RNA sequence: GGGAACGACUCGAGUAGAGUCGAAAAUAAAAUUAUUCAAGAGAUACCCUUUAGCCAGAGGAUUCUUCAUCUCGCUUGGGAUGCACAGGGCGUUGAUGUGAUUACCGAAGAUGAAGAGCAUCAUCGCUAUUCCUAAGAGCUUCGGCUCUUAGGAAUAAAAAGAAACAACAACAACAAC
Reactivity to DMS in 0.01 (KOAc 150mM, MgCl2 10mM, bicine 150mM(pH8.5), 24C), signal-to-noise 2, nucleotides 027 to 126: u020a030a090a100a100u010u010a070u020u010c050a110a090g010a150g000a090u000a080c030c010c000u000u000u010a090g000c080c100a080g010a050g010g000a130u010u000c010u010u000c050a030u000c000u000c050g020c240u000u000g000g020g000a090u000g000c160a050c180a080g010g010g000c040g000u000u000g010a060u010g010u000g010a170u000u010a230c000c020g000a100a000g000a060u000g010a070a040g000a150g000c080a010u000c040a040u000c050g020c110
Overview
Source: RMDB library OK2TST, as collected in RNAgym. This 177-nucleotide RNA was probed chemically with DMS. For DMS, 912 sequencing reads were counted. The RNA was probed in 150 mM KOAc, 10 mM MgCl2 and 150 mM bicine (pH 8.5) at 24 C. Reactivities are given for positions 27 through 126.